[RMDB]
RNA sequence: GGGAACGACUCGAGUAGAGUCGAAAAUGACCAUUCGUGGUCACAAAUGGGGUCAGCUCGAUGAGCCUAUCAGAGCGUAGAGACUGAAGCCUCCACGGUGUAGCUCUGUAAGGGCGAGAGCUGACGGAGGCACCCUGAAGUUACCUUUCGAGGUAAACAAAGACUACUCAUUCGUGAGUAGUCUUUGAAAAGAAACAACAACAACAAC
Reactivity to DMS in 0.01 (KOAc 150mM, MgCl2 10mM, bicine 150mM(pH8.5), 24C), signal-to-noise 3, nucleotides 027 to 156: u000g000a020c000c000a080u000u010c280g040u000g020g030u000c010a020c040a050a090a080u000g010g000g030g010u000c000a060g030c020u000c000g010a180u010g030a280g020c010c010u000a140u000c010a050g020a040g010c000g030u000a150g030a140g000a130c010u000g000a100a110g010c030c000u000c000c010a300c050g020g000u000g000u000a180g000c000u000c000u000g010u010a090a170g000g010g030c010g000a230g000a060g030c000u000g010a020c020g010g020a040g120g110c020a060c010c000c010u010g000a140a130g020u000u000a020c000c000u000u000u010c210g010a000g000g010u000a010a050a200
Reactivity to 2A3 in 0.01 (KOAc 150mM, MgCl2 10mM, bicine 150mM(pH8.5), 24C), signal-to-noise 5, nucleotides 027 to 156: u090g010a000c000c000a010u030u060c220g070u060g000g000u040c010a000c050a050a130a100u230g030g000g010g000u000c000a010g000c000u000c010g210a290u210g070a060g020c000c010u140a170u230c000a000g000a000g010c020g060u200a080g080a060g050a180c000u010g010a030a010g010c000c000u000c010c000a010c010g000g030u080g060u160a050g010c000u000c000u010g150u190a300a300g100g000g000c020g010a090g000a000g010c000u000g000a000c010g010g000a000g000g000c000a020c000c000c000u050g070a070a010g050u030u010a010c010c000u080u090u150c250g100a040g010g030u080a060a010a010